Chemical mapping of a 207-nucleotide RNA with DMS and 2A3. Source: RMDB library RNAMAK, as collected in RNAgym. The reactions ran in a buffer of 150 mM KOAc, 10 mM MgCl2 and 150 mM bicine (pH 8.5), at 24 C. For 2A3 the reverse transcriptase was SuperScript II with manganese.

[RMDB]
RNA sequence: GGGAACGACUCGAGUAGAGUCGAAAACCGUAGGUCCAGAACUACAGGAUUAUUGAACAACAGCUUUCUUUCGAAAGAGAGAAAGACAUGUUCAAGAAUCCUGCUGGACCUAAACGGAAAAGUAUGUCCAUAAACGUUCGCGUUUAUGGACAUACAACAACGUUUCUAAGUUCGCUUAGAAACGUUGAAAAGAAACAACAACAACAAC
Reactivity to DMS in 0.01 (KOAc 150mM, MgCl2 10mM, bicine 150mM(pH8.5), 24C), signal-to-noise 2, nucleotides 027 to 156: c000c010g000u000a030g010g050u000c000c010a150g050a120a250c060u020a300c000a020g010g040a020u000u000a030u000u000g020a020a010c000a060a080c090a160g000c010u000u010u000c000u000u000u000c000g010a180a140a300g010a010g020a000g010a020a010a020g010a020c090a250u000g000u000u010c000a010a020g000a020a010u000c000c000u010g000c000u000g010g000a010c000c000u000a000a000a030c000g030g020a090a080a080a160g020u000a000u000g030u000c000c000a010u010a000a020a020c000g020u000u000c300g040c020g020u000u010u000a000u000g010g000a020c010a000u000a000c000a150a130
Reactivity to 2A3 in 0.01 (KOAc 150mM, MgCl2 10mM, bicine 150mM(pH8.5), 24C), signal-to-noise 3, nucleotides 027 to 156: c000c000g000u010a010g010g010u000c000c010a010g030a140a080c170u220a040c300a000g010g000a000u020u020a020u040u020g000a000a000c000a020a000c020a100g050c010u000u000u010c000u010u020u000c010g040a050a140a040g000a000g000a000g020a000a000a000g070a020c020a030u030g000u000u000c000a000a000g020a000a010u000c000c010u000g000c000u000g000g030a000c000c000u010a000a010a000c010g040g030a090a070a050a060g010u000a000u000g000u000c000c000a000u000a000a010a010c010g030u060u090c280g020c010g120u000u020u000a000u000g000g000a000c000a000u000a000c000a000a000